Chemical mapping of a 177-nucleotide RNA with DMS. The data come from the RNA Mapping Database (RMDB), library OK2TRN. DMS adducts were read by reverse transcription with MarathonRT.
[RMDB]
RNA sequence: GGGAACGACUCGAGUAGAGUCGAAAAUGCUUAUUUCUGAAUGCCUGUGCUUACCUAAUGGUCCAACCUUAUGUUACCAUCAUCUUAUUGUAAAAUUGGAACCCCCCAGCAAAGGAUACAUCCUCACGUUCAGUCCCUUAUUCGUAAGGGACUGAACAAAAGAAACAACAACAACAAC
Reactivity to DMS in 0.01 (KOAc 150mM, MgCl2 10mM, bicine 150mM(pH8.5), 24C), signal-to-noise 1, nucleotides 027 to 126: u020g020c060u000u000a090u010u000u000c050u000g020a100a050u010g000c020c010u020g010u000g020c130u000u000a110c080c060u010a100a060u000g040g000u030c070c060a090a110c050c110u040u010a070u000g030u000u010a070c020c040a080u000c120a040u000c000u020u000a060u000u000g020u000a020a020a050a110u000u000g040g020a110a290c020c010c000c010c020c030a240g010c150a010a050a030g000g010a130u010a080c160a040u000c000c030u020c080a130c230